[RMDB]
RNA sequence: GGGAACGACUCGAGUAGAGUCGAAAAAUCUGUAUGGACAACCUCACUACCCAUGUCGCUGAGGCAGAAGAUAAAAUUGGUACUACAACCGAAAAAGGAGGAGAAAUUACUGCAGGUCUCAGAAGAGCCUGAUAUCAAUCUUCGGAUUGAUAUCAGGAAAAGAAACAACAACAACAAC
Reactivity to DMS in 0.01 (KOAc 150mM, MgCl2 10mM, bicine 150mM(pH8.5), 24C), signal-to-noise 2, nucleotides 027 to 126: a100u000c030u010g010u010a080u000g010g000a060c090a080a110c060c030u000c040a060c070u000a110c040c040c020a180u000g020u010c050g010c090u010g010a160g010g000c000a030g020a050a030g010a110u000a060a070a040a110u000u000g010g030u000a110c150u000a050c210a090a060c070c040g000a050a070a080a110a090g000g000a040g000g000a080g000a050a020a070u000u000a080c060u010g000c060a020g020g050u000c030u000c050a110g020a090a180g000a130g030
Reactivity to 2A3 in 0.01 (KOAc 150mM, MgCl2 10mM, bicine 150mM(pH8.5), 24C), signal-to-noise 1, nucleotides 027 to 126: a010u000c030u010g050u070a060u170g020g060a000c010a020a050c060c000u020c000a090c030u060a100c010c000c040a060u060g050u030c030g000c100u060g010a010g000g000c040a020g060a170a010g000a040u150a100a100a000a070u100u110g000g000u030a020c020u050a090c080a070a060c010c030g050a090a000a000a000a000g010g040a020g000g020a040g030a020a090a000u100u090a040c030u030g000c000a020g040g000u000c030u010c010a140g040a300a030g060a040g000